[RMDB]
RNA sequence: GGGAACGACUCGAGUAGAGUCGAAAAGAUAUGGAUAAUCACUAGCGAGGAUCACACUGGGUCGGAAACGACCUUGUGGGAGCUAAAUUAUCCUAAGUCAAAACGUGCCGAGUUCGCUCGGCACGAACUAUACUCCAAUCUUCGGAUUGGAGUAUAGAAAAGAAACAACAACAACAAC
Reactivity to 2A3 in 0.01 (KOAc 150mM, MgCl2 10mM, bicine 150mM(pH8.5), 24C), signal-to-noise 3, nucleotides 027 to 126: g010a000u030a000u040g000g010a000u000a020a010u050c120a050c300u050a020g010c000g070a300g160g030a030u010c010a000c010a020c110u090g010g000g010u000c000g000g000a000a010a010c000g000a010c010c000u010u000g000u000g010g010g010a010g000c010u000a050a030a000u000u000a000u000c010c000u000a000a000g010u000c020a000a040a090a180c020g000u010g000c010c000g000a000g020u110u180c300g070c210u000c000g000g020c000a000c000g000a000a000
Reactivity to DMS in 0.01 (KOAc 150mM, MgCl2 10mM, bicine 150mM(pH8.5), 24C), signal-to-noise 5, nucleotides 027 to 126: g000a000u000a030u020g000g010a030u000a000a010u010c190a230c300u000a010g010c000g020a110g030g010a060u010c020a020c000a020c300u010g000g000g010u010c000g010g010a010a010a010c010g020a010c000c000u000u000g020u000g000g000g010a050g030c000u000a030a100a020u000u000a000u000c000c010u000a000a110g000u000c000a110a070a110a290c030g010u000g000c000c000g010a040g010u000u010c300g010c000u000c000g010g010c000a000c000g000a010a110